RNA sequence: GGGAACGACUCGAGUAGAGUCGAAAAACUUGGAGACAAGAGUGCUACAGGCCUUGGUGGUGAGGUUUGCAAGUACUUAAGUUCAAACUGCUGGGAUUAGUGAUUCCCCUCUGGCUAGGGCUGAUUUUGAUGUUCCCUCUGUAGGCGGGCUUAGCUCCGUCUACUAAUAGUUCGCUAUUAGUAGACGAAAAGAAACAACAACAACAAC
Reactivity to 2A3 in 0.01 (KOAc 150mM, MgCl2 10mM, bicine 150mM(pH8.5), 24C), signal-to-noise 7, nucleotides 027 to 156: a000c040u040u060g050g010a070g010a040c030a100a040g010a020g060u050g020c010u030a020c010a050g020g040c010c010u040u040g040g010u050g010g030u080g050a020g010g000u020u020u060g030c050a070a010g030u040a040c000u070u100a070a040g030u070u070c040a070a070a050c040u060g030c030u040g020g000g030a060u070u070a100g080u060g090a090u070u080c010c010c010c000u020c030u020g050g010c020u020a050g010g020g000c020u030g060a090u030u060u100u150g080a080u100g020u030u030c000c020c010u030c040u050g080u050a050g020g060c010g030g010g030c040u090u120a020g010c010u030c030
Reactivity to DMS in 0.01 (KOAc 150mM, MgCl2 10mM, bicine 150mM(pH8.5), 24C), signal-to-noise 6, nucleotides 027 to 156: a070c050u010u000g010g010a190g010a120c050a060a230g010a080g030u000g020c020u000a050c060a070g010g010c010c000u000u000g020g030u000g010g010u000g010a050g010g020u000u000u000g010c030a040a090g030u000a040c050u000u000a040a260g010u000u000c060a080a090a090c050u010g020c030u000g010g030g010a090u000u000a080g010u000g000a210u010u000c010c010c000c030u000c040u000g010g010c030u000a080g020g020g020c020u000g000a120u000u000u000u000g010a130u000g010u000u000c000c010c010u000c070u000g020u000a050g020g010c040g010g010g000c030u000u010a090g010c040u010c030